[RMDB]
RNA sequence: GGGAACGACUCGAGUAGAGUCGAAAAUGGAAGCGUUCGAAUCAGUCGUCAUAUCAUACCCCACUGCCCCCGCUUUGAAGGCCGCAAAGACGAGGUGGUCGGCCACAACGUCAAGACCGGCGAUGAGGCUUGCCAGUAAUUUCGAUUACUGGCAAGCAAAAGAAACAACAACAACAAC
Reactivity to DMS in 0.01 (KOAc 150mM, MgCl2 10mM, bicine 150mM(pH8.5), 24C), signal-to-noise 1, nucleotides 027 to 126: u000g010g010a070a080g020c060g090u000u010c030g020a100a100u010c030a090g000u000c040g010u040c080a060u000a060u010c100a090u000a130c090c010c040c130a100c060u000g000c020c000c010c000c040g020c140u000u000u000g030a090a120g000g020c000c000g020c030a040a120a120g000a040c050g020a090g040g020u000g000g010u000c120g010g010c010c000a010c020a020a060c020g000u010c060a090a170g010a130c300c000g000g000c000g000a130u000g000a070g020

Chemical mapping of a 177-nucleotide RNA with DMS. The RNA was probed in 150 mM KOAc, 10 mM MgCl2 and 150 mM bicine (pH 8.5) at 24 C.